[RMDB]
RNA sequence: GGGAACGACUCGAGUAGAGUCGAAAAAGAAAGAGCGUAGCACACACUCAGACUAAGUCUGACACACACCUACGCUAAACAUCUUAGUGUGUGAUCGAGAUAUCGAUGUCUGUGUAAGAUGAAAAAAGUGUUGAAAGAGAUUCGUCUCUUUCAACACAAAAGAAACAACAACAACAAC
Reactivity to DMS in 0.01 (KOAc 150mM, MgCl2 10mM, bicine 150mM(pH8.5), 24C), signal-to-noise 4, nucleotides 027 to 126: a130g000a090a060a140g000a160g010c020g010u000a030g010c000a000c010a030c150a020c020u000c000a020g000a020c030u010a150a130g010u000c000u000g000a040c010a000c000a010c000a020c020c000u000a020c000g010c040u010a040a090a110c030a000u010c000u000u000a020g010u000g030u010g020u000g000a020u000c000g010a030g000a150u010a070u000c000g010a000u000g010u000c130u010g020u000g010u010a030a010g000a010u000g000a000a040a060a120a070a090
Reactivity to 2A3 in 0.01 (KOAc 150mM, MgCl2 10mM, bicine 150mM(pH8.5), 24C), signal-to-noise 3, nucleotides 027 to 126: a000g140a030a060a010g130a020g040c000g000u010a000g000c000a000c000a000c000a000c010u000c000a000g000a010c040u140a210a090g040u020c000u000g000a000c000a000c010a000c000a000c000c000u020a010c010g030c050u050a060a070a000c010a010u020c000u020u010a010g000u000g000u010g000u000g010a020u010c010g030a010g050a170u230a080u220c010g010a010u020g010u010c020u000g000u000g000u000a000a010g000a010u050g110a110a020a000a000a010a030